Description
The record gives the reactivity of an RNA of 177 nucleotides to 2A3 and DMS. For DMS, 406 sequencing reads were counted. Conditions: 150 mM KOAc, 10 mM MgCl2 and 150 mM bicine (pH 8.5), 24 C. For 2A3 the reverse transcriptase was SuperScript II with manganese. For DMS the reverse transcriptase was MarathonRT.
RNA sequence: GGGAACGACUCGAGUAGAGUCGAAAAGGAAAAUUUAUAUUGAUCGUCAUUCAACGAUCCCCGCUCGGGUUAGAAAGCACCACAAGCGCAGUGACGAUCGCUUGUGAGUAGUAGUCACACUAGAUGGGAGGAACCUACAAUUCGUUGUAGGUUCCUCAAAAGAAACAACAACAACAAC
Reactivity to 2A3 in 0.01 (KOAc 150mM, MgCl2 10mM, bicine 150mM(pH8.5), 24C), signal-to-noise 1, nucleotides 027 to 126: g080g070a200a040a130a040u260u300u130a300u080a080u050u080g000a000u020c000g060u020c130a130u190u150c020a050a000c020g000a010u000c020c000c000c030g020c000u040c000g010g000g000u010u010a000g070a050a010a000g030c000a000c000c000a000c000a020a000g080c000g000c030a000g000u000g010a020c010g000a020u050c000g000c010u020u020g000u010g210a100g000u000a000g020u030a030g020u040c030a010c010a030c080u150a080g020a300u050g120g100
Reactivity to DMS in 0.01 (KOAc 150mM, MgCl2 10mM, bicine 150mM(pH8.5), 24C), signal-to-noise 1, nucleotides 027 to 126: g010g000a050a080a140a080u000u080u020a060u000a120u000u000g000a060u000c030g030u000c090a140u030u000c300a170a010c080g000a000u000c000c000c000c000g000c000u000c000g000g000g000u000u000a020g030a170a170a000g110c030a300c030c000a000c000a020a000g000c000g080c300a030g000u030g010a000c000g000a020u000c000g050c000u000u000g060u000g000a090g000u000a030g000u000a000g000u000c010a180c300a200c060u050a050g000a260u000g000g000

Values cover nucleotides 27 to 126. For 2A3, 695 sequencing reads were counted. Source: RMDB library OK2TRN, as collected in RNAgym.